[RMDB]
Conditions: 150 mM KOAc, 10 mM MgCl2 and 150 mM bicine (pH 8.5), 24 C. Structure probing data (2A3 and DMS) for a 177-nucleotide construct. DMS adducts were read by reverse transcription with MarathonRT.
RNA sequence: GGGAACGACUCGAGUAGAGUCGAAAAGGGUUUACAGAGUUACUUACCCCAGAAGUUGCCCUGGACGCUCAACAACACAUCAAACAGUUUUAUCUGGCUUGCAUUGAACCCACAAGCACAGAAAUGCCCUUUAGUUCGAAUUCGUUCGAACUAAAGGAAAAGAAACAACAACAACAAC
Reactivity to 2A3 in 0.01 (KOAc 150mM, MgCl2 10mM, bicine 150mM(pH8.5), 24C), signal-to-noise 9, nucleotides 027 to 126: g020g010g000u030u020u040a070c050a030g080a020g060u060u060a040c010u050u110a110c010c010c010c010a020g040a100a020g050u060u070g020c010c010c000u000g010g010a020c050g020c030u040c020a020a080c040a050a010c040a030c010a160u180c080a060a090a130c050a080g030u030u020u050u070a120u050c000u000g000g000c000u000u010g000c010a090u050u160g060a050a040c000c010c010a010c000a010a000g000c010a010c000a300g010a020a030a010u090g050c010
Reactivity to DMS in 0.01 (KOAc 150mM, MgCl2 10mM, bicine 150mM(pH8.5), 24C), signal-to-noise 4, nucleotides 027 to 126: g030g000g020u010u000u000a140c130a130g000a230g030u010u010a040c080u000u010a120c030c000c020c050a100g010a100a080g000u000u010g010c000c010c020u010g030g000a100c170g000c030u010c090a070a090c100a040a100c110a070c190a040u030c120a040a080a080c160a060g000u000u000u000u020a060u010c030u000g010g000c010u000u000g000c090a060u010u040g010a070a080c030c020c010a190c020a020a020g020c050a060c010a020g010a020a080a050u020g000c220